The data come from the RNA Mapping Database (RMDB), library OK1LIB. The record gives the reactivity of an RNA of 177 nucleotides to 2A3 and DMS. The RNA was probed in 150 mM KOAc, 10 mM MgCl2 and 150 mM bicine (pH 8.5) at 24 C.
RNA sequence: GGGAACGACUCGAGUAGAGUCGAAAACUCCGAGCAUGGCUCACGCUGCUCCUCGGCCCGUGGUCGUCUAUGCCUGAGCAUGAGCUAGGUCCGGUGCGGGCGCUCGGCUGGCUACGAGAGGACCGCAGCUGGAGUAGCCUUUCGAGGCUACUCCAGCAAAAGAAACAACAACAACAAC
Reactivity to 2A3 in 0.01 (KOAc 150mM, MgCl2 10mM, bicine 150mM(pH8.5), 24C), signal-to-noise 5, nucleotides 027 to 126: c020u000c000c010g010a010g020c060a210u200g050g000c010u030c030a080c120g060c020u050g000c020u020c000c020u030c040g070g010c010c010c050g020u090g010g010u050c060g010u010c100u070a040u160g020c010c020u090g080a030g040c020a130u140g030a020g030c030u080a080g000g140u020c010c020g060g080u100g090c080g020g000g010c010g000c030u010c010g010g000c010u030g030g010c020u050a070c080g080a020g010a010g060g050a020c010c030g030c010a020
Reactivity to DMS in 0.01 (KOAc 150mM, MgCl2 10mM, bicine 150mM(pH8.5), 24C), signal-to-noise 2, nucleotides 027 to 126: c100u030c000c030g010a050g000c170a080u020g030g020c060u000c090a090c250g000c040u000g010c060u000c020c010u000c010g000g030c000c070c040g000u030g000g020u000c010g010u000c060u010a070u030g010c000c040u010g020a050g010c000a100u020g000a130g000c020u050a100g010g020u010c060c000g000g040u020g030c020g020g000g000c040g020c020u000c090g000g040c000u040g000g000c000u090a040c110g020a040g020a070g000g000a080c070c030g030c040a150